[RMDB]
Background: Structure probing data (DMS and 2A3) for a 177-nucleotide construct. Conditions: 150 mM KOAc, 10 mM MgCl2 and 150 mM bicine (pH 8.5), 24 C. For 2A3 the reverse transcriptase was SuperScript II with manganese.
RNA sequence: GGGAACGACUCGAGUAGAGUCGAAAAAUGCUGAGGCUGUCUCGCUCAACCAUGGUGUUGGAGUCGUAAAGCUUAUGGGUCGCGACAGUGGCUUCAUUGCGGCACAGGCGGCUGUGGCGAGUGCCCAAAUAAUCAUGUAAUUCGUUACAUGAUUAUUAAAAGAAACAACAACAACAAC
Reactivity to DMS in 0.01 (KOAc 150mM, MgCl2 10mM, bicine 150mM(pH8.5), 24C), signal-to-noise 9, nucleotides 027 to 126: a070u010g010c030u000g010a200g020g010c010u000g010u000c040u000c050g010c040u000c030a030a040c030c030a180u010g010g010u010g020u000u000g010g010a070g020u010c040g020u010a070a130a120g010c040u000u000a070u000g010g000g010u000c030g010c020g000a080c300a070g020u000g010g000c020u000u010c070a080u000u000g010c050g010g010c110a090c180a080g000g000c040g010g010c010u000g010u030g010g010c010g000a130g010u010g010c000c000c010a060
Reactivity to 2A3 in 0.01 (KOAc 150mM, MgCl2 10mM, bicine 150mM(pH8.5), 24C), signal-to-noise 9, nucleotides 027 to 126: a000u130g000c020u040g010a040g050g020c010u010g040u060c030u020c060g010c010u040c010a020a020c020c020a270u300g130g010u170g050u100u050g080g040a040g020u100c030g020u090a070a040a030g010c000u030u030a050u090g030g000g010u060c010g000c010g050a080c060a110g010u030g080g000c000u160u140c070a080u040u170g030c030g030g000c040a030c020a070g060g000c020g020g000c020u040g060u120g060g000c010g010a020g060u130g040c000c000c000a010